[RMDB]
RNA sequence: GGGAACGACUCGAGUAGAGUCGAAAAGAUUCUAUGUUCGCAUAGAAUCAAAGAACGCCGAAGCGCAGAGCGCAAGAUGGACGAGACGGCGAACCACCAAAAAAACAGCGGUCUUCGGACCGCUGAAGUUCUAAUCAUACUUCGGUAUGAUUAGAACAAAAGAAACAACAACAACAAC
Reactivity to 2A3 in 0.01 (KOAc 150mM, MgCl2 10mM, bicine 150mM(pH8.5), 24C), signal-to-noise 2, nucleotides 027 to 126: g000a010u000u020c000u000a010u010g030u010u040c130g000c090a000u000a010g000a000a000u000c000a000a000a000g020a080a010c030g000c000c000g040a120a020g010c010g000c090a100g070a060g240c010g000c040a070a020g090a100u190g030g050a050c060g000a020g010a050c020g010g000c010g010a030a020c020c030a030c030c030a130a140a040a010a010a000a020c020a000g000c000g010g000u000c010u020u040c130g070g000a000c000c000g000c000u000g000a000a000
Reactivity to DMS in 0.01 (KOAc 150mM, MgCl2 10mM, bicine 150mM(pH8.5), 24C), signal-to-noise 3, nucleotides 027 to 126: g010a010u000u000c000u000a000u000g010u010u010c280g060c000a020u000a020g010a000a000u020c000a040a080a070g000a120a220c030g030c000c010g010a170a150g010c000g010c060a130g010a170g010c020g020c030a090a090g010a090u000g030g000a080c090g010a090g000a130c040g010g010c000g020a080a140c090c040a120c080c070a000a010a060a050a100a190a190c050a040g000c000g010g000u000c000u000u020c190g040g000a020c000c000g020c000u000g010a020a060